[RMDB]
RNA sequence: GGGAACGACUCGAGUAGAGUCGAAAACAUACGGACUUCGGUCCGUAUGAAAGUACCUCAAAUUGACGCAAACUUCCGCGUCAUCGCGAGGAAGCGAGGAAAAAAUCGAGGUGUUCGCACCUCGAAACUCUGUUGUCUUCUUCGGAAGACAACAGAGAAAAGAAACAACAACAACAAC
Reactivity to DMS in 0.01 (KOAc 150mM, MgCl2 10mM, bicine 150mM(pH8.5), 24C), signal-to-noise 2, nucleotides 027 to 126: c000a000u010a000c020g000g000a010c000u000u010c240g010g050u000c010c000g010u010a000u000g000a010a070a100g010u010a090c000c000u010c030a070a190a050u010u000g000a050c030g090c050a070a080a130c180u000u000c190c160g000c020g030u000c010a010u010c170g030c270g010a040g020g010a050a040g000c010g040a110g000g000a000a030a050a040a130a090u000c000g000a000g010g000u000g020u000u010c140g040c000a030c040c000u000c010g000a000a010a030
Reactivity to 2A3 in 0.01 (KOAc 150mM, MgCl2 10mM, bicine 150mM(pH8.5), 24C), signal-to-noise 2, nucleotides 027 to 126: c010a000u010a000c010g000g010a000c040u040u070c260g050g000u000c000c010g000u000a000u000g000a010a000a000g090u050a080c000c030u030c010a070a110a030u060u020g000a000c000g000c010a000a200a260c190u280u020c110c080g000c000g040u010c040a030u000c030g050c030g030a050g030g080a010a030g070c030g030a090g050g100a060a140a000a030a000a060u030c000g000a020g000g000u010g040u040u050c150g030c070a000c000c010u000c000g000a000a000a000